[RMDB]
RNA sequence: GGGAACGACUCGAGUAGAGUCGAAAACUCAGUGACCUGGACUAACUCACAGAGAGGUAGCAAUGGGGAGGGCCAGAGCCUCGCUUCUGAGGGAUUACACCACAGCUCACUUCCCCCACCCAAAGGCGAAUAUCUCCAAAUUCGUUUGGAGAUAUUCAAAAGAAACAACAACAACAAC
Reactivity to DMS in 0.01 (KOAc 150mM, MgCl2 10mM, bicine 150mM(pH8.5), 24C), signal-to-noise 8, nucleotides 027 to 126: c040u010c050a080g020u000g010a070c080c040u000g010g000a170c120u000a070a100c040u000c030a060c090a080g000a090g010a040g000g000u000a050g010c100a100a110u000g000g000g020g020a100g010g010g020c050c090a050g010a170g010c010c010u000c040g000c110u000u000c080u000g000a060g010g000g010a140u000u000a080c130a090c070c060a090c070a060g010c100u000c030a050c050u000u010c010c000c000c010c070a130c020c020c010a050a100a100g010g020c220
Reactivity to 2A3 in 0.01 (KOAc 150mM, MgCl2 10mM, bicine 150mM(pH8.5), 24C), signal-to-noise 6, nucleotides 027 to 126: c030u020c030a020g030u020g050a060c010c010u030g030g020a030c030u050a080a020c000u040c040a040c060a050g120a010g000a010g070g020u040a030g050c090a110a140u090g020g010g040g020a110g020g060g060c020c020a020g010a030g060c020c020u040c020g040c070u140u080c050u090g020a060g040g020g010a050u050u140a060c070a020c070c020a040c020a050g000c000u020c020a030c000u090u110c000c000c010c000c010a090c010c010c000a050a030a000g100g010c050

This 177-nucleotide RNA was probed chemically with DMS and 2A3. The RNA was probed in 150 mM KOAc, 10 mM MgCl2 and 150 mM bicine (pH 8.5) at 24 C. The 2A3 profile rests on 11,822 reads. Source: RMDB library OK2TRN, as collected in RNAgym. Values cover nucleotides 27 to 126. 2A3 adducts were read by reverse transcription with SuperScript II with manganese.